[RMDB]
RNA sequence: GGGAACGACUCGAGUAGAGUCGAAAACAUCAGGUGAACCUUGAAUACCUUGCGCGUGUGGUGAUGGAGAAUAACCAGGGCAUUCUGUAUCCCGACUCUGUCGUUGGCACAGACUCCCAUACCACCAGAUAACGGCAGGAUUCGUCCUGCCGUUAUCAAAAGAAACAACAACAACAAC
Reactivity to 2A3 in 0.01 (KOAc 150mM, MgCl2 10mM, bicine 150mM(pH8.5), 24C), signal-to-noise 2, nucleotides 027 to 126: c030a080u100c000a000g050g010u040g070a070a050c020c010u020u020g040a060a020u190a210c020c010u040u140g100c090g010c030g030u140g010u030g010g000u020g010a070u040g030g000a030g050a180a130u090a050a020c010c000a010g030g020g000c010a020u160u000c000u050g030u040a100u060c000c040c010g020a040c040u020c070u170g040u060c040g090u100u120g000g000c040a000c000a030g040a030c010u000c000c010c020a010u040a010c030c020a000c000c000a000
Reactivity to DMS in 0.01 (KOAc 150mM, MgCl2 10mM, bicine 150mM(pH8.5), 24C), signal-to-noise 3, nucleotides 027 to 126: c090a150u010c080a050g000g020u010g000a070a210c070c050u010u010g000a080a080u010a110c030c010u000u000g010c130g000c130g040u020g000u000g000g010u000g010a080u000g000g000a120g000a090a080u010a120a150c130c050a100g000g010g000c220a060u000u010c020u000g010u000a120u000c030c060c010g000a070c040u000c060u000g010u030c030g020u010u020g020g000c270a060c050a020g010a050c110u000c010c010c050a110u000a060c040c030a070c020c080a110

Conditions: 150 mM KOAc, 10 mM MgCl2 and 150 mM bicine (pH 8.5), 24 C. Structure probing data (2A3 and DMS) for a 177-nucleotide construct. It was measured as part of the RMDB library OK2TST. 2A3 adducts were read by reverse transcription with SuperScript II with manganese.